[RMDB]
RNA sequence: GGGAACGACUCGAGUAGAGUCGAAAACAAUUGAGCGUCGCACACAGACAGACUAAGUCUGACACUGACAGAGCCUAAACCGCUCUGUCAGUGUGCGAGAUAUCGUUCUUAAUGUGAGCAGAGGAAAGGGGAUGAGUCAAUUCGUUGACUCAUCCCCAAAAGAAACAACAACAACAAC
Reactivity to DMS in 0.01 (KOAc 150mM, MgCl2 10mM, bicine 150mM(pH8.5), 24C), signal-to-noise 1, nucleotides 027 to 126: c040a140a140u020u020g000a120g000c010g020u000c000g030c000a050c060a110c060a000g000a090c160a020g000a090c050u020a050a220g020u000c000u030g000a110c050a000c010u000g060a000c000a000g020a010g000c000c000u010a020a070a120c300c300g010c000u000c000u000g020u000c000a000g030u000g000u000g010c000g000a040g000a080u010a190u000c100g020u000u020c000u000u000a100a060u000g010u000g020a090g010c040a210g020a060g020g000a060a100a130
Reactivity to 2A3 in 0.01 (KOAc 150mM, MgCl2 10mM, bicine 150mM(pH8.5), 24C), signal-to-noise 1, nucleotides 027 to 126: c030a060a110u100u180g010a040g090c000g160u060c030g000c010a010c020a010c000a020g010a010c000a020g060a000c040u140a230a040g000u000c000u000g040a050c010a000c010u020g000a000c000a010g010a000g100c000c010u070a070a090a040c030c010g000c010u000c010u010g000u000c000a020g000u030g010u010g000c010g010a020g020a010u190a010u110c030g030u030u030c020u030u050a160a130u090g000u020g010a040g020c090a040g020a060g050g070a110a030a090